[RMDB]
RNA sequence: GGGAACGACUCGAGUAGAGUCGAAAACGCGCCAAGUGGCGCUCGCAAACAAGAUCAGACCCAGCGCGGCAACUCCGGUCAACACCCGCCCGGGCGUAUCUGUGACUAAGGUCACAGACGCAAUAGCACUGCCGGGUAUUUUCGAAUACCCGGCAGUAAAAGAAACAACAACAACAAC
Reactivity to 2A3 in 0.01 (KOAc 150mM, MgCl2 10mM, bicine 150mM(pH8.5), 24C), signal-to-noise 2, nucleotides 027 to 126: c040g010c020g040c000c040a240a170g210u240g260g000c040g020c050u070c060g130c060a060a090a060c030a000a140g030a100u150c060a000g070a160c000c000c000a020g000c020g000c020g030g000c050a050a050c010u000c020c000g000g020u020c040a030a030c000a040c050c030c000g070c000c030c000g040g020g000c000g000u030a040u020c020u000g000u000g030a000c000u050a150a130g190g000u000c010a020c000a010g040a010c000g010c000a030a130u070a120g070c030
Reactivity to DMS in 0.01 (KOAc 150mM, MgCl2 10mM, bicine 150mM(pH8.5), 24C), signal-to-noise 1, nucleotides 027 to 126: c250g000c000g000c000c020a300a100g000u020g070g000c000g000c000u000c110g000c070a060a190a060c190a070a070g000a210u000c050a090g000a150c060c000c000a110g010c000g000c030g000g000c130a040a000c080u070c060c040g000g030u020c010a040a080c090a060c000c040c040g000c040c000c070g030g000g080c010g000u000a070u000c010u000g000u070g000a000c010u000a070a090g010g000u000c000a000c000a000g020a070c030g000c040a100a040u020a080g000c130

The record gives the reactivity of an RNA of 177 nucleotides to 2A3 and DMS.
For DMS, 1,161 sequencing reads were counted.
For DMS the reverse transcriptase was MarathonRT.
2A3 adducts were read by reverse transcription with SuperScript II with manganese.
The reactions ran in a buffer of 150 mM KOAc, 10 mM MgCl2 and 150 mM bicine (pH 8.5), at 24 C.